[RMDB]
RNA sequence: GGGAACGACUCGAGUAGAGUCGAAAAAAAGACGCACCACCACCAGUUGAAACAUGAGACAUGCGCUUCGCCUCACCGCUCAACUCAGCUGCACUUGCGCUGUCACCACCACCGAUGAUACUCAUGAAUGUCACCGUGCGUUCGCGCACGGUGACAUAAAAGAAACAACAACAACAAC
Reactivity to 2A3 in 0.01 (KOAc 150mM, MgCl2 10mM, bicine 150mM(pH8.5), 24C), signal-to-noise 1, nucleotides 027 to 126: a110a100a090g130a000c120g010c090a090c100c000a000c080c000a040c000c000a040g000u000u130g060a050a000a030c100a170u250g030a020g000a100c000a000u110g040c060g000c240u200u130c000g050c000c000u000c000a070c000c000g020c000u120c000a010a010c000u000c070a000g000c060u130g000c080a050c080u020u070g090c080g080c030u040g000u100c030a000c020c010a000c000c000a000c000c060g030a020u170g000a000u150a090c030u030c000a010u190g110a210

Background
Structure probing data (2A3) for a 177-nucleotide construct. For 2A3 the reverse transcriptase was SuperScript II with manganese. The reactions ran in a buffer of 150 mM KOAc, 10 mM MgCl2 and 150 mM bicine (pH 8.5), at 24 C. The data come from the RNA Mapping Database (RMDB), library OK1LIB. For 2A3, 324 sequencing reads were counted.